[RMDB]
RNA sequence: GGGAACGACUCGAGUAGAGUCGAAAACGAUCCACGCUGGGAAUGAAGAAUAUGGUGCAGACAUGCAUCUCUGAAGCGCGCACGGAGAUGCAACAGCUGCACCUAAGUUCUGUUCCUGUGCUGAAGCGCGCACGGCAACCGAAAGGUGCGGAGUGAAGACGGGUGUCAUGUUCGCAUGACACCCGUCAAAAGAAACAACAACAACAAC
Reactivity to 2A3 in 0.01 (KOAc 150mM, MgCl2 10mM, bicine 150mM(pH8.5), 24C), signal-to-noise 4, nucleotides 027 to 156: c060g020a030u070c030c020a080c080g010c050u060g000g010g060a040a030u100g110a160a160g010a010a000u070a080u300g010g000u000g010c000a000g020a050c040a160u300g010c010a010u010c000u000c000u020g080a200a070g000c000g010c000g000c000a010c030g010g000a000g000a000u000g010c020a050a020c040a090g020c000u000g000c010a000c000c000u000a000a000g000u000u000c010u020g000u010u000c000c000u030g040u030g020c030u040g030a130a040g000c000g000c000g020c010a010c020g030g000c010a040a050c030c000g080a120a030a050g020g000u000g000c000g000g050a100g030u120g060a090a110
Reactivity to DMS in 0.01 (KOAc 150mM, MgCl2 10mM, bicine 150mM(pH8.5), 24C), signal-to-noise 1, nucleotides 027 to 156: c010g000a210u000c030c020a060c010g080c020u000g010g000g010a060a010u000g030a100a070g020a030a000u010a300u000g000g000u020g020c000a080g010a070c020a220u000g020c010a020u000c000u000c000u000g020a030a100g050c030g100c030g000c000a300c050g000g030a000g000a020u000g050c010a050a050c090a060g000c020u010g000c010a010c000c000u000a020a060g040u000u000c000u010g000u000u000c000c010u000g010u020g020c010u000g020a030a050g050c060g030c030g000c010a230c000g000g070c010a020a130c050c010g000a090a090a160g010g000u000g050c000g030g000a100g040u000g010a100a180
The data come from the RNA Mapping Database (RMDB), library RNAMAK.
Structure probing data (2A3 and DMS) for a 207-nucleotide construct.